An RNA of 177 nucleotides, treated with 2A3 and DMS and read out base by base.
DMS adducts were read by reverse transcription with MarathonRT.
It was measured as part of the RMDB library TTRDEL.
The RNA was probed in 150 mM KOAc, 10 mM MgCl2 and 150 mM bicine (pH 8.5) at 24 C.

[RMDB]
RNA sequence: GGGAACGACUCGAGUAGAGUCGAAAAGAUAUGGACUUACUGCGCACAUCGCUGACUCGGAAACGAGGUGGAGAUGUGACCCGCAAAGGAGUCCUAAGUCAAAGCGUUAGGCUUCGGCCUAACGCAAGAUAACUACUGCCUUCGGGCAGUAGUUAUCAAAAGAAACAACAACAACAAC
Reactivity to 2A3 in 0.01 (KOAc 150mM, MgCl2 10mM, bicine 150mM(pH8.5), 24C), signal-to-noise 3, nucleotides 027 to 126: g060a020u080a050u180g000g000a000c000u000u030a020c010u050g000c010g000c010a000c000a010u010c010g000c120u120g050a050c000u000c010g040g050a040a100a070c010g000a020g000g050u040g020g020a100g000a000u010g020u020g000a020c000c000c030g000c030a300a300a000g020g000a000g000u000c000c000u030a120a020g070u030c070a110a070a020g000c000g000u020u010a020g000g020c000u030u120c300g150g010c010c000u000a010a000c000g010c000a000a000
Reactivity to DMS in 0.01 (KOAc 150mM, MgCl2 10mM, bicine 150mM(pH8.5), 24C), signal-to-noise 3, nucleotides 027 to 126: g000a060u000a300u000g000g020a010c000u000u000a000c010u000g000c000g010c000a010c010a000u000c000g010c000u010g040a040c000u000c000g020g000a120a070a170c000g010a010g010g000u000g000g020a060g000a020u010g010u000g000a050c160c110c050g000c000a000a070a010g000g000a010g010u000c000c000u000a040a100g000u000c030a070a120a140g000c000g020u000u000a000g000g020c000u000u010c210g020g000c000c000u000a000a000c000g000c000a010a010